The record gives the reactivity of an RNA of 177 nucleotides to DMS. The data come from the RNA Mapping Database (RMDB), library OK2TRN. For DMS the reverse transcriptase was MarathonRT.
RNA sequence: GGGAACGACUCGAGUAGAGUCGAAAAAUGCGGGACACAUCCUCCGGGAGCUCGGGGUGAAGCGCGUGACGCUGCUGGAGGCGGUCACCAGGGCGAGGGAGGAGCAGGAGACCCCCGAGGUGGAGGAAUGCCAGUACAUGUUCGCAUGUACUGGCAUAAAAGAAACAACAACAACAAC
Reactivity to DMS in 0.01 (KOAc 150mM, MgCl2 10mM, bicine 150mM(pH8.5), 24C), signal-to-noise 1, nucleotides 027 to 126: a080u000g010c030g000g010g030a200c100a070c150a160u000c000c010u010c020c000g000g000g060a100g020c000u000c020g010g010g010g030u010g000a050a100g020c100g020c020g000u000g010a110c050g000c050u000g060c090u010g000g000a150g000g000c030g010g030u000c020a060c020c060a190g010g000g000c090g020a260g000g000g000a070g000g000a140g030c070a100g010g000a080g020a190c150c020c010c010c000g020a010g000g020u000g000g000a040g020g010a060